[RMDB]
RNA sequence: GGGAACGACUCGAGUAGAGUCGAAAACUGGAACUGGCCGACCUCCAGCGCCUGAACCUGGAGCUGUACACCGGUGCGGCCCCGAGCCCGAGGACUUCGAAAUGAGCCUCGGCAAGAACCCGGCUCAUCUCUGCAUGGUCGGGGGCAAGAGCCCCCGCGUACGUUAUUCUUUCGAGAAUAACGUACGAAAAGAAACAACAACAACAAC
Reactivity to 2A3 in 0.01 (KOAc 150mM, MgCl2 10mM, bicine 150mM(pH8.5), 24C), signal-to-noise 2, nucleotides 027 to 156: c030u080g030g040a080a040c040u090g020g000c020c000g020a040c010c000u000c010c000a010g000c020g050c000c060u080g080a090a110c020c060u010g010g000a010g010c030u060g030u090a030c030a020c100c060g040g000u100g090c000g010g000c000c000c000c020g020a020g030c010c020c000g020a030g010g000a220c020u130u090c140g070a230a170a270u170g010a030g000c020c010u000c000g020g000c000a020a030g020a030a020c010c030c020g040g010c070u090c050a100u000c050u010c090u160g060c060a070u070g030g020u060c000g000g000g000g020g010c080a240a060g030a060g100c010c000c000c010c000g000